[RMDB]
RNA sequence: GGGAACGACUCGAGUAGAGUCGAAAAGUAAAAGAUGGCGAUAGUGUAAUGAUCGAAUCAGGUGCUACUUGUACACUACUUGCCGAAGAAUUGGCGUAUCAUAAAGAUGAGGUAACGAUUAUUACAACAAAAUAUGCUAUUUCGAUAGCAUAUUUUGAAAAGAAACAACAACAACAAC
Reactivity to DMS in 0.01 (KOAc 150mM, MgCl2 10mM, bicine 150mM(pH8.5), 24C), signal-to-noise 9, nucleotides 027 to 126: g010u010a060a080a090a100g000a080u010g000g010c040g010a080u000a070g020u000g010u010a020a040u010g000a040u000c040g010a100a140u010c070a080g010g030u000g010c090u000a070c110u000u010g020u000a050c050a050c060u010a040c100u000u000g030c020c010g010a060a090g010a060a120u000u000g010g010c030g020u000a030u010c050a070u010a070a090a090g000a090u000g000a070g000g010u010a060a150c050g000a030u000u000a040u000u000a040c060a070a190
Reactivity to 2A3 in 0.01 (KOAc 150mM, MgCl2 10mM, bicine 150mM(pH8.5), 24C), signal-to-noise 9, nucleotides 027 to 126: g040u070a010a050a050a040g100a110u140g050g040c060g040a060u060a090g120u050g000u040a050a050u060g040a020u030c040g030a040a070u070c020a040g060g000u040g070c030u050a110c040u110u130g040u060a010c030a000c020u070a010c010u040u090g000c010c020g010a050a020g080a070a110u070u080g030g000c020g010u050a020u080c040a030u120a130a170a030g120a060u060g030a020g040g050u040a060a020c020g010a010u010u040a030u040u040a050c010a070a010